Chemical mapping of a 207-nucleotide RNA with 2A3. Reactivities are given for positions 27 through 156. The reactions ran in a buffer of 150 mM KOAc, 10 mM MgCl2 and 150 mM bicine (pH 8.5), at 24 C.
RNA sequence: GGGAACGACUCGAGUAGAGUCGAAAAUUCAGUUAAACGCAAAACCAACGCAAGAUCUUUGGCAAUACUAUACACACAUUUAGGGCAAUCUUUUGCUUCCAUGGCCGGCAAAUUAACGUUAGCACGGCCAUCGACAAGAUUAGCGCCGGCUCGGUCGCUACUGGUGCGCAUUCGUGCGCACCAGUAGAAAAGAAACAACAACAACAAC
Reactivity to 2A3 in 0.01 (KOAc 150mM, MgCl2 10mM, bicine 150mM(pH8.5), 24C), signal-to-noise 1, nucleotides 027 to 156: u050u050c000a000g040u080u140a170a070a000c100g000c040a040a000a080a110c000c010a010a010c070g050c080a040a120g020a120u010c090u060u050u070g060g000c050a050a020u070a170c060u020a010u070a140c050a000c020a000c010a110u040u060u280a160g010g010g000c020a000a000u000c000u000u190u150u070g050c070u000u000c000c000a030u030g000g000c030c000g020g000c000a000a100a100u210u090a200a020c000g050u030u080a010g030c080a120c200g000g000c000c000a000u000c000g000a000c000a020a010g010a020u020u000a060g090c070g020c060c000g000g030c000u050c040g020g040u040c020g000